[RMDB]
RNA sequence: GGGAACGACUCGAGUAGAGUCGAAAAAGCUCCUCGUGAUGUCCGAGCAAUGGCGAAGUCCUAGGCAUCACAUCUCCGGGCGAUGUCGAAGCAAUGGCAGAAGUCCUAGGCAUCGUUCCUGCAUCCGCCUUUACGUAGUGUUCGCACUACGUAAAGGAAAAGAAACAACAACAACAAC
Reactivity to DMS in 0.01 (KOAc 150mM, MgCl2 10mM, bicine 150mM(pH8.5), 24C), signal-to-noise 3, nucleotides 027 to 126: a090g000c110u000c010c040u000c170g000u020g010a050u000g010u020c000c130g030a050g030c140a110a110u010g000g020c030g020a140a080g010u010c010c010u000a080g000g000c020a030u000c000a020c040a070u000c070u000c100c140g000g000g000c030g000a040u000g020u000c010g000a140a140g000c110a070a120u000g000g020c090a170g020a080a130g000u000c020c000u000a160g000g010c010a040u000c000g010u010u000c000c020u010g000c120a080u020c060c140g000
Reactivity to 2A3 in 0.01 (KOAc 150mM, MgCl2 10mM, bicine 150mM(pH8.5), 24C), signal-to-noise 5, nucleotides 027 to 126: a010g090c070u060c020c020u060c070g000u000g000a020u020g030u040c040c050g010a020g000c040a060a120u300g030g000c170g280a240a030g060u150c010c000u000a000g010g000c000a010u020c000a000c000a030u090c100u030c040c040g020g000g000c020g010a010u010g010u030c020g050a030a000g020c040a040a120u280g060g000c070a070g150a300a020g060u110c010c010u010a010g010g010c000a010u000c010g000u180u100c000c000u030g050c010a080u060c050c040g020

Structure probing data (DMS and 2A3) for a 177-nucleotide construct. 2A3 adducts were read by reverse transcription with SuperScript II with manganese. The reactions ran in a buffer of 150 mM KOAc, 10 mM MgCl2 and 150 mM bicine (pH 8.5), at 24 C. Values are in units of 0.01, from 0 to 300, in steps of 10. DMS adducts were read by reverse transcription with MarathonRT.